[RMDB]
RNA sequence: GGGAACGACUCGAGUAGAGUCGAAAACAGACUCGAGCGAAAGCUCGGCGAAAGCCGCGUACAUGUGACUGUCGGCAGGUGUACAGUCGACAGUUACUCUUCGGAGUAACAAUAGAAACAACAACAAAUACCCUGGUAUCUUCGGAUACCAGGGUAUAAAAGAAACAACAACAACAAC
Reactivity to 2A3 in 0.01 (KOAc 150mM, MgCl2 10mM, bicine 150mM(pH8.5), 24C), signal-to-noise 4, nucleotides 027 to 126: c050a010g100a020c020u020c020g040a000g020c000g060a160a030a010g000c000u020c000g010g010c000g080a080a030a030g050c020c010g040c040g020u070a050c030a130u180g020u020g050a010c000u020g000u010c000g000g000c000a030g110g080u240g080u150a070c070a030g000u000c000g010a000c010a000g000u000u000a000c000u010c010u020u100c090g080g010a030g030u050a070a010c040a110a070u080a110g180a110a110a000c090a010a000c000a040a000c010a000a130
Reactivity to DMS in 0.01 (KOAc 150mM, MgCl2 10mM, bicine 150mM(pH8.5), 24C), signal-to-noise 2, nucleotides 027 to 126: c030a080g020a110c030u000c000g010a010g000c010g000a070a050a240g010c000u000c000g020g000c000g000a130a080a170g000c150c050g000c030g000u030a080c080a060u030g000u010g020a020c000u020g000u020c020g010g050c000a060g020g030u040g030u030a070c120a050g060u000c000g000a030c040a030g000u000u000a000c000u000c050u000u020c010g020g000a030g000u050a030a120c080a070a030u050a100g000a090a040a000c120a030a080c170a090a080c140a040a060

Overview:
Structure probing data (2A3 and DMS) for a 177-nucleotide construct. The data come from the RNA Mapping Database (RMDB), library OK1LIB. For 2A3, 2,376 sequencing reads were counted. For DMS the reverse transcriptase was MarathonRT.